The record gives the reactivity of an RNA of 207 nucleotides to DMS and 2A3.
Values cover nucleotides 27 to 156.
It was measured as part of the RMDB library OK3TST.

[RMDB]
RNA sequence: GGGAACGACUCGAGUAGAGUCGAAAAAGAUGAGAUUUGACCAAAAUGAUUUUGUGUUCAUUUUGAAUAUGAAUGCGAAUUUUACGCCGAUAUGUGAUUUUUAAUUUGUUUGAUAACCAGCCACGAGCAGGCCCAUAAAGAUUAAGAUCUAAUAAAAUAGUAAUAGUGAUUUCGAUCACUAUUACUAAAAAGAAACAACAACAACAAC
Reactivity to DMS in 0.01 (KOAc 150mM, MgCl2 10mM, bicine 150mM(pH8.5), 24C), signal-to-noise 1, nucleotides 027 to 156: a110g030a140u000g000a150g000a130u010u000u000g010a140c020c030a040a060a090a130u010g010a040u000u020u000u010g050u030g020u010u000c000a040u000u000u010u000g000a140a170u000a030u010g010a050a010u010g030c010g010a000a040u000u000u000u030a110c040g070c020c030g030a090u010a050u000g010u020g010a060u010u010u000u020u000a020a100u000u000u000g000u000u010u010g010a100u010a050a110c020c020a100g000c010c030a060c060g030a110g040c020a080g030g040c030c000c030a080u000a110a050a130g000a080u000u000a040a100g000a080u000c030u000a050a120u000a050a030a080a180
Reactivity to 2A3 in 0.01 (KOAc 150mM, MgCl2 10mM, bicine 150mM(pH8.5), 24C), signal-to-noise 1, nucleotides 027 to 156: a000g020a020u070g050a080g020a140u270u090u110g040a030c010c000a000a000a210a000u000g060a030u060u100u100u210g050u020g010u010u000c000a000u000u020u290u250g070a190a150u190a080u190g000a000a000u000g050c050g030a000a000u040u130u080u010a060c070g000c050c080g060a060u060a050u030g100u010g090a090u000u080u000u060u150a000a150u080u020u120g000u170u000u180g110a090u090a020a000c000c000a020g000c000c000a000c060g000a030g000c000a020g000g030c000c040c000a070u090a010a080a000g020a000u010u010a050a050g010a000u040c000u020a130a080u010a190a240a040a070